[RMDB]
RNA sequence: GGGAACGACUCGAGUAGAGUCGAAAACUGUCGCAUACAAAAUAGCGCCUCUAAUCUAGUUGCGAUAAGGAAUGUGUAUGUGUAAUUGAAGAUCCAGGAUGUUUUCCUUUUCAGGGAGAUGAGAAGACCUAUAGCCGUGGUUCGCCACGGCUAUAGGAAAAGAAACAACAACAACAAC
Reactivity to 2A3 in 0.01 (KOAc 150mM, MgCl2 10mM, bicine 150mM(pH8.5), 24C), signal-to-noise 3, nucleotides 027 to 126: c020u010g000u090c060g000c000a000u050a080c070a000a200a010a110u090a040g050c010g000c000c000u050c000u020a230a300u100c030u080a060g070u070u010g060c030g050a020u150a130a040g240g100a170a110u220g070u030g040u080a000u030g070u000g070u130a050a210u170u120g120a140a020g020a080u010c060c000a000g090g010a060u100g040u150u000u010u040c060c000u090u080u060u080c030a010g080g070g000a130g020a100u010g040a050g050a180a000g050a060
Reactivity to DMS in 0.01 (KOAc 150mM, MgCl2 10mM, bicine 150mM(pH8.5), 24C), signal-to-noise 2, nucleotides 027 to 126: c080u000g040u010c040g000c030a020u010a000c070a000a070a130a150u030a040g040c110g000c030c030u000c030u030a080a100u030c050u010a080g010u010u000g030c030g010a030u000a050a080g000g050a090a030u000g010u030g010u030a020u000g050u070g030u010a090a040u040u000g000a140a140g000a030u010c020c060a140g030g000a070u020g010u000u000u000u000c020c020u000u000u010u000c040a050g010g030g000a020g020a020u000g000a070g000a150a040g000a220
This 177-nucleotide RNA was probed chemically with 2A3 and DMS. For DMS the reverse transcriptase was MarathonRT. The RNA was probed in 150 mM KOAc, 10 mM MgCl2 and 150 mM bicine (pH 8.5) at 24 C.